Annotation: Structure probing data (2A3 and DMS) for a 177-nucleotide construct. Conditions: 150 mM KOAc, 10 mM MgCl2 and 150 mM bicine (pH 8.5), 24 C. DMS adducts were read by reverse transcription with MarathonRT. For DMS, 15,796 sequencing reads were counted.
RNA sequence: GGGAACGACUCGAGUAGAGUCGAAAAUCAUCCAAGUUCGCUUGGAUGAAACGGUACUGAAGCUAAAAACGAUCCGAGGCAACAGUACCAUAAAAGGAUCGUCAGCCUGCAAAUUCGUUUGCAGGAAAUUUCAAUAAGGAUUCGUCCUUAUUGAAAUAAAAGAAACAACAACAACAAC
Reactivity to 2A3 in 0.01 (KOAc 150mM, MgCl2 10mM, bicine 150mM(pH8.5), 24C), signal-to-noise 5, nucleotides 027 to 126: u020c000a000u000c000c000a010a000g010u030u110c210g020c110u000u010g000g010a000u000g000a000a020a000c060g000g000u010a010c010u010g020a050a010g010c060u130a180a060a020a090a090c030g000a010u000c010c010g070a070g100g000c000a020a010c000a030g000u000a000c000c000a000u040a000a080a000a010g010g000a010u010c010g050u030c060a030g070c010c000u000g000c000a000a000a040u050u040c130g070u070u020u010g000c000a000g000g000a030a020
Reactivity to DMS in 0.01 (KOAc 150mM, MgCl2 10mM, bicine 150mM(pH8.5), 24C), signal-to-noise 9, nucleotides 027 to 126: u000c000a000u000c000c000a010a010g010u000u020c230g030c010u010u010g010g010a010u000g010a010a080a090c190g000g010u000a000c000u000g010a070a300g010c010u010a050a050a070a070a050c020g000a010u000c010c010g010a150g010g000c010a050a240c010a020g010u000a010c000c010a050u000a030a050a110a060g000g000a010u000c010g020u000c280a130g000c000c000u000g000c000a010a010a050u000u010c200g010u000u000u000g000c000a010g000g000a000a010